[RMDB]
RNA sequence: GGGAACGACUCGAGUAGAGUCGAAAAGAUAUGGACGACCCAUGCAGCAACAGCUAACGUCGGAAACGACGUUAGACAUGCUGGUCAUGGUCGUCCUAAGUCAAACAUUGCGGUUCGCCGCAAUGAAUCUUCUACACGUCUUCGGACGUGUAGAAGAAAAAGAAACAACAACAACAAC
Reactivity to 2A3 in 0.01 (KOAc 150mM, MgCl2 10mM, bicine 150mM(pH8.5), 24C), signal-to-noise 2, nucleotides 027 to 126: g000a000u040a030u140g010g000a000c000g000a020c070c090c050a000u030g060c040a030g000c020a000a180c000a210g060c010u000a000a000c000g010u010c010g050g000a070a070a010c000g020a000c010g000u010u000a000g010a030c010a020u070g000c010u060g020g110u280c010a000u030g000g020u000c010g000u010c000c000u000a010a010g000u000c000a000a000a030c020a020u000u010g000c010g010g130u040u090c300g050c160c000g000c050a000a010u000g000a000a010
Reactivity to DMS in 0.01 (KOAc 150mM, MgCl2 10mM, bicine 150mM(pH8.5), 24C), signal-to-noise 3, nucleotides 027 to 126: g000a030u000a300u000g000g000a030c000g010a000c160c070c070a030u000g000c020a030g010c000a020a100c290a220g000c000u000a000a000c000g010u000c000g020g010a110a120a260c020g010a010c020g010u000u000a020g000a010c080a220u000g020c000u000g010g010u010c010a030u000g000g010u000c010g000u000c000c010u000a020a090g040u000c020a170a140a270c010a000u000u000g000c000g010g010u010u030c270g020c010c010g000c000a000a000u010g010a080a090